[RMDB]
RNA sequence: GGGAACGACUCGAGUAGAGUCGAAAACAGUAAACGUAGCAACAGUGGUGAUUAACAGCCUGAUAGGGUGCUGCAGAGGCCCACUGUCUUGCUACUAAAGGUCUCUGCAGACGAUGAAAGACAUCGAAGUCAGGCUAAAUUUCGAUUUAGCCUGACUAAAAGAAACAACAACAACAAC
Reactivity to DMS in 0.01 (KOAc 150mM, MgCl2 10mM, bicine 150mM(pH8.5), 24C), signal-to-noise 3, nucleotides 027 to 126: c030a140g060u020a060a080a090c170g020u000a020g000c000a030a040c040a050g010u020g000g050u060g000a090u010u000a100a150c190a170g000c010c010u010g000a140u040a130g020g000g020u030g060c000u000g000c040a000g020a000g020g000c020c000c030a070c070u020g020u000c180u030u000g030c010u010a000c030u040a020a090a020g000g030u010c000u000c000u000g010c000a000g010a120c030g000a000u000g000a110a090a040g020a220c010a000u000c000g000a140
Reactivity to 2A3 in 0.01 (KOAc 150mM, MgCl2 10mM, bicine 150mM(pH8.5), 24C), signal-to-noise 3, nucleotides 027 to 126: c040a000g090u200a010a190a010c120g020u090a020g020c000a000a020c000a020g010u010g040g040u150g090a150u080u060a110a080c060a010g040c000c000u140g100a240u270a150g070g030g000u200g000c020u020g000c000a000g000a000g050g000c000c000c010a000c020u010g030u000c050u030u160g030c030u010a000c000u010a000a010a000g000g000u000c000u000c000u010g000c000a000g050a050c000g010a000u000g010a070a100a000g070a050c010a030u000c030g000a000